[RMDB]
RNA sequence: GGGAACGACUCGAGUAGAGUCGAAAACGACUCGCCGAGCAGCGUGAAGAAGAUGUAACCGCUGUUCCACGCCCAGUACAUGCCCUGUUCCAGGCUCAGCGGGGCUUUGGCGGUGGUCGCGUCGGCGCUUGUCUGAUUACUUCGGUAAUCAGACAAGAAAAGAAACAACAACAACAAC
Reactivity to 2A3 in 0.01 (KOAc 150mM, MgCl2 10mM, bicine 150mM(pH8.5), 24C), signal-to-noise 3, nucleotides 027 to 126: c020g020a010c010u010c020g000c010c010g000a000g030c020a030g030c020g030u080g060a170a100g080a080a010g050a100u090g020u110a030a020c010c010g000c010u000g020u180u070c030c000a030c040g000c000c010c000a020g030u060a030c040a100u150g000c000c020c000u080g050u080u050c040c030a030g030g030c030u020c040a010g020c020g010g020g000g000c000u140u120u080g020g000c020g030g000u030g000g020u040c030g010c000g050u020c020g010g040c040g000
Reactivity to DMS in 0.01 (KOAc 150mM, MgCl2 10mM, bicine 150mM(pH8.5), 24C), signal-to-noise 5, nucleotides 027 to 126: c060g010a050c030u000c010g010c010c020g000a010g010c150a100g020c020g010u000g000a120a130g000a120a110g020a070u000g020u010a100a070c050c010g010c010u000g010u000u000c030c040a070c300g010c000c010c030a070g020u010a060c100a090u000g000c030c000c020u000g000u000u000c050c040a300g000g000c020u010c230a140g000c020g000g010g000g010c020u000u000u010g000g020c030g010g000u000g010g010u000c010g010c030g010u000c020g010g010c080g010

Record summary:
An RNA of 177 nucleotides, treated with 2A3 and DMS and read out base by base. In probing experiments dimethyl sulfate is read out at A N1 and C N3, which are open when not base-paired. The reactions ran in a buffer of 150 mM KOAc, 10 mM MgCl2 and 150 mM bicine (pH 8.5), at 24 C. 2A3 adducts were read by reverse transcription with SuperScript II with manganese.